[RMDB]
RNA sequence: GGGAACGACUCGAGUAGAGUCGAAAAAGGAUAGGAUUCGUCCUAUCCUACACCAAAACCUCCUGGCGGUGCGGCGCCGGCCCCGCCGGCAAGGCCGCCUUAUUGGUAGCUGGUUCGCCAGCUACAAUCGAUGGAGGAUAUUCGUAUCCUCCAUCGAAAAAGAAACAACAACAACAAC
Reactivity to 2A3 in 0.01 (KOAc 150mM, MgCl2 10mM, bicine 150mM(pH8.5), 24C), signal-to-noise 2, nucleotides 027 to 126: a010g000g000a010u030a000g030g000a000u000u070c190g030u060c040c000u000a010u010c000c000u000a020c020a060c000c000a060a040a060a110c010c040u040c010c040u030g000g020c030g010g000u150g300c040g030g030c050g000c020c040g000g010c130c190c060c050g020c010c000g000g000c040a020a010g060g000c010c000g030c000c000u010u040a040u010u110g070g000u000a010g000c000u010g010g040u020u030c180g010c060c000a000g000c000u010a010c010a010a050
Reactivity to DMS in 0.01 (KOAc 150mM, MgCl2 10mM, bicine 150mM(pH8.5), 24C), signal-to-noise 2, nucleotides 027 to 126: a000g000g000a000u000a000g010g000a030u000u010c150g000u000c000c000u000a000u000c000c000u000a030c130a180c040c040a070a040a070a280c080c040u010c070c080u000g010g000c020g010g010u000g000c040g010g020c200g000c000c000g000g000c010c120c150c210g000c000c000g000g040c030a070a150g000g020c000c000g020c020c050u000u010a000u000u000g010g020u000a000g010c010u000g000g000u000u020c230g010c020c000a010g000c000u000a000c000a040a060
Structure probing data (2A3 and DMS) for a 177-nucleotide construct.
The reactions ran in a buffer of 150 mM KOAc, 10 mM MgCl2 and 150 mM bicine (pH 8.5), at 24 C.